[RMDB]
RNA sequence: GGGAACGACUCGAGUAGAGUCGAAAACACAUAUCUGUUGCCCACCGAACAGCGCAUCUUCCAGAUGGUCCAGCGCAAGUUCGACGACUAUUUGAACCAACAGAUCACCUUGUGUCGUGAUCUUGGAUACCCGAUAAAUCUUCGGAUUUAUCGGGUAAAAAGAAACAACAACAACAAC
Reactivity to 2A3 in 0.01 (KOAc 150mM, MgCl2 10mM, bicine 150mM(pH8.5), 24C), signal-to-noise 3, nucleotides 027 to 126: c050a010c020a010u150a050u180c090u090g040u070u060g020c020c020c000a010c030c000g000a020a000c010a020g020c000g020c030a070u040c040u220u000c050c050a060g020a300u140g060g060u050c050c060a040g000c020g000c070a070a060g020u030u030c000g030a030c030g030a020c060u110a150u170u200u130g110a060a050c020c000a010a030c020a070g000a010u000c000a030c010c020u190u200g090u080g030u270c060g010u010g030a020u010c000u000u020g010g000a020
Reactivity to DMS in 0.01 (KOAc 150mM, MgCl2 10mM, bicine 150mM(pH8.5), 24C), signal-to-noise 4, nucleotides 027 to 126: c040a030c100a110u020a060u000c060u010g020u010u000g000c010c010c010a210c180c010g010a020a030c020a190g000c020g030c020a080u000c030u000u010c100c070a150g020a110u000g020g030u010c050c050a100g010c010g000c030a080a090g000u000u000c020g010a120c120g010a080c140u000a090u000u000u020g000a100a150c090c020a050a060c120a020g000a030u000c030a030c030c040u010u000g020u010g010u000c170g010u010g000a040u000c010u000u000g000g010a300
About this RNA:
An RNA of 177 nucleotides, treated with 2A3 and DMS and read out base by base. For 2A3 the reverse transcriptase was SuperScript II with manganese. The 2A3 profile rests on 2,747 reads.